[RMDB]
RNA sequence: GGGAACGACUCGAGUAGAGUCGAAAAGGACAAUAUAUUAAAUGGAUUUUUGGAAUUAGGAGUUGGAAUAGGAGCUUGCUCCGUCCACUCCACGCAUCGACCUGGUAUUGCAGUACUUCCAGGAACGCUAGACUAAGUGGUUCGCCACUUAGUCUAGAAAAGAAACAACAACAACAAC
Reactivity to 2A3 in 0.01 (KOAc 150mM, MgCl2 10mM, bicine 150mM(pH8.5), 24C), signal-to-noise 2, nucleotides 027 to 126: g030g010a020c020a070a000u100a010u090a080u260u300a110a100a050u160g010g050a090u030u030u030u100u100g060g030a080a050u100u040a200g000g040a030g020u160u100g140g030a060a080u090a300g020g000a000g010c020u090u080g000c000u070c000c000g000u000c010c030a000c000u000c010c000a000c000g000c000a030u050c030g060a050c010c040u010g020g030u100a080u090u160g000c000a010g050u050a040c030u030u000c020c000a000g000g000a020a040c040g010
Reactivity to DMS in 0.01 (KOAc 150mM, MgCl2 10mM, bicine 150mM(pH8.5), 24C), signal-to-noise 2, nucleotides 027 to 126: g000g000a090c010a060a060u000a100u000a090u020u020a050a040a090u010g000g000a150u000u000u010u010u010g000g000a080a060u010u000a090g020g000a020g010u000u020g030g000a010a060u010a130g000g010a020g010c040u010u000g030c000u000c000c000g000u000c000c010a020c010u000c000c020a080c140g000c080a050u000c080g010a130c100c100u010g000g010u010a070u010u000g020c040a190g000u010a090c180u000u000c010c010a020g010g000a010a060c070g030
Structure probing data (2A3 and DMS) for a 177-nucleotide construct. DMS adducts were read by reverse transcription with MarathonRT. For 2A3, 1,186 sequencing reads were counted. The RNA was probed in 150 mM KOAc, 10 mM MgCl2 and 150 mM bicine (pH 8.5) at 24 C.